[RMDB]
Chemical mapping of a 177-nucleotide RNA with DMS and 2A3. For 2A3, 5,972 sequencing reads were counted. The DMS profile rests on 8,938 reads. Values cover nucleotides 27 to 126.

RNA sequence: GGGAACGACUCGAGUAGAGUCGAAAAUGGCGCAGACCUCAGGCACCGAGCGCGUAUUUUGGAGCAUGUGUUUCGGGGGCAGGCAUGGCUACAUAAAGCUAGAGAAGUGGGUCGAAGUGGGGCGUAACAUCUCUAUACAGUUCGCUGUAUAGAGAUGAAAAGAAACAACAACAACAAC
Reactivity to DMS in 0.01 (KOAc 150mM, MgCl2 10mM, bicine 150mM(pH8.5), 24C), signal-to-noise 6, nucleotides 027 to 126: u010g010g030c020g020c040a080g000a130c070c020u000c080a090g010g000c060a070c030c040g010a070g010c050g020c040g020u010a070u000u000u010u000g010g010a110g010c050a060u010g020u000g010u000u010u000c050g010g000g010g000g020c070a060g010g000c060a090u000g010g020c020u000a070c160a090u010a050a070a070g000c030u000a070g010a110g010a080a070g020u000g010g010g010u000c070g010a060a080g020u000g010g000g000g000c070g010u000a060a160
Reactivity to 2A3 in 0.01 (KOAc 150mM, MgCl2 10mM, bicine 150mM(pH8.5), 24C), signal-to-noise 2, nucleotides 027 to 126: u090g060g000c050g000c060a030g020a160c000c010u050c040a010g040g030c020a020c030c040g030a020g030c030g000c020g020u060a150u060u160u050u110g070g030a070g040c040a060u100g060u010g040u090u160u120c050g000g000g010g030g000c020a010g030g030c000a040u080g020g000c010u030a010c010a040u220a080a200a000g040c020u040a020g020a000g020a210a050g050u110g010g000g020u060c050g020a070a010g040u070g010g000g000g020c020g000u010a030a020